[RMDB]
RNA sequence: GGGAACGACUCGAGUAGAGUCGAAAAGUUCAUCCCCUGAUCAAGGAUGCCCGAAACGGUGAGGCGGAAAGCAAAUUAAAUAACGUCAACCCAUCGGGACGGUUGGCCAGUUAAAAAGUGAGGAUUCAAAAGAUCGAACCGUUCGCGGUUCGAUCAACCAUGAUCUUAUGUUCGCAUAAGAUCAUGGAAAAGAAACAACAACAACAAC
Reactivity to 2A3 in 0.01 (KOAc 150mM, MgCl2 10mM, bicine 150mM(pH8.5), 24C), signal-to-noise 6, nucleotides 027 to 156: g040u050u070c030a060u040c050c000c000c020u050g010a070u050c010a030a030g050g010a060u100g020c000c010c000g040a070a080a020c090g050g010u050g010a150g030g030c030g040g000a150a030a020g060c140a090a040a090u220u160a070a070a100u140a070a040c020g000u000c010a010a020c000c000c000a040u040c020g000g010g010a010c000g020g030u010u010g010g000c000c020a030g020u130u160a070a070a010a040a010g050u090g060a060g010g080a090u110u070c070a040a040a040a050g000a000u000c000g000a000a000c000c000g000u040u040c180g010c010g080g000u010u000c000g000a000u000c000a000a000
Reactivity to DMS in 0.01 (KOAc 150mM, MgCl2 10mM, bicine 150mM(pH8.5), 24C), signal-to-noise 1, nucleotides 027 to 156: g030u010u000c050a070u000c000c000c010c030u050g000a060u000c030a080a110g000g030a140u010g030c110c030c000g000a050a100a150c160g000g000u010g020a160g000g030c030g000g010a060a060a140g010c100a050a070a190u010u020a030a080a110u000a070a100c090g010u010c000a050a040c010c000c020a210u010c070g000g000g000a070c060g030g010u000u000g030g020c070c000a100g000u000u000a040a110a030a050a100g010u000g020a120g000g000a230u010u000c070a090a020a050a160g000a010u000c000g000a010a020c000c000g020u000u010c300g010c050g030g020u000u000c000g000a000u000c010a030a080
About this RNA:
The record gives the reactivity of an RNA of 207 nucleotides to 2A3 and DMS. For DMS the reverse transcriptase was MarathonRT. The DMS profile rests on 2,172 reads.